The record gives the reactivity of an RNA of 177 nucleotides to 2A3 and DMS. The DMS profile rests on 6,902 reads.

RNA sequence: GGGAACGACUCGAGUAGAGUCGAAAAGACAUGCAAUGGAACAUAAACCAGAUGCCUAUAUUGGAGAUGUACAUGGGUUACAGGUUGACUUGAAUACACGUGACGCGUCGGGAGGUGCUGAUGAUACCACUGAAGUUCGUUUCGACGAACUUCAGUGAAAAGAAACAACAACAACAAC
Reactivity to 2A3 in 0.01 (KOAc 150mM, MgCl2 10mM, bicine 150mM(pH8.5), 24C), signal-to-noise 4, nucleotides 027 to 126: g050a040c060a030u100g030c010a040a120u080g050g080a180a030c030a220u230a080a080a050c030c010a010g050a160u090g030c000c000u110a100u060a100u200u180g090g010a060g030a050u060g020u080a040c000a080u050g120g000g000u020u100a030c040a030g110g000u030u090g050a040c020u020u110g070a060a010u110a100c020a000c090g060u090g060a040c040g000c010g060u020c020g020g000g020a060g000g000u040g020c020u020g000a030u060g000a010u100a090c040
Reactivity to DMS in 0.01 (KOAc 150mM, MgCl2 10mM, bicine 150mM(pH8.5), 24C), signal-to-noise 4, nucleotides 027 to 126: g000a140c120a030u020g040c050a080a100u030g000g000a090a070c160a050u040a050a090a070c020c000a040g000a130u040g030c010c030u000a070u020a120u030u010g000g000a070g000a060u030g030u000a090c140a040u040g010g000g020u020u040a060c110a060g010g000u000u010g030a050c070u010u020g000a100a050u010a070c050a050c110g020u040g000a050c080g010c060g020u000c060g000g010g000a040g010g000u000g000c030u000g000a030u000g000a160u020a060c160